[RMDB]
RNA sequence: GGGAACGACUCGAGUAGAGUCGAAAAGGGCGGCGGGGAGGCGCGACUGGAUACCCGAGGAGUGUAGCGUCGACGGCGACCUCGUCACCUGCCCGCGUGAGGCUCUCCGUCGUCUACUCCUCGCGGCGCGUCAAGAGCAGUUCGCUGCUCUUGACGCAAAAGAAACAACAACAACAAC
Reactivity to 2A3 in 0.01 (KOAc 150mM, MgCl2 10mM, bicine 150mM(pH8.5), 24C), signal-to-noise 1, nucleotides 027 to 126: g030g000g020c040g000g020c070g000g000g000g000a060g010g020c040g000c020g040a090c030u040g090g030a090u080a160c010c000c000g000a020g010g030a070g000u160g000u200a030g050c060g110u080c070g030a020c040g060g040c010g040a100c010c010u010c020g070u050c020a040c020c020u090g090c050c010c000g060c030g000u070g060a110g050g000c090u000c000u000c020c010g000u020c010g000u020c000u000a000c010u000c020c010u030c010g000c100g030g040c050
Reactivity to DMS in 0.01 (KOAc 150mM, MgCl2 10mM, bicine 150mM(pH8.5), 24C), signal-to-noise 1, nucleotides 027 to 126: g000g010g020c000g030g010c060g000g000g050g010a070g010g010c100g020c070g000a120c120u010g010g030a300u020a230c040c090c000g010a040g000g010a070g000u000g010u000a070g000c140g030u010c020g000a010c030g000g010c080g010a060c010c010u000c020g020u000c060a120c070c030u010g000c130c020c090g020c080g010u010g010a010g000g010c160u000c010u010c000c000g040u000c010g000u000c030u010a090c010u000c000c000u000c010g010c090g010g030c150
An RNA of 177 nucleotides, treated with 2A3 and DMS and read out base by base. Reactivities are given for positions 27 through 126. The data come from the RNA Mapping Database (RMDB), library OK2TST. For 2A3, 1,490 sequencing reads were counted.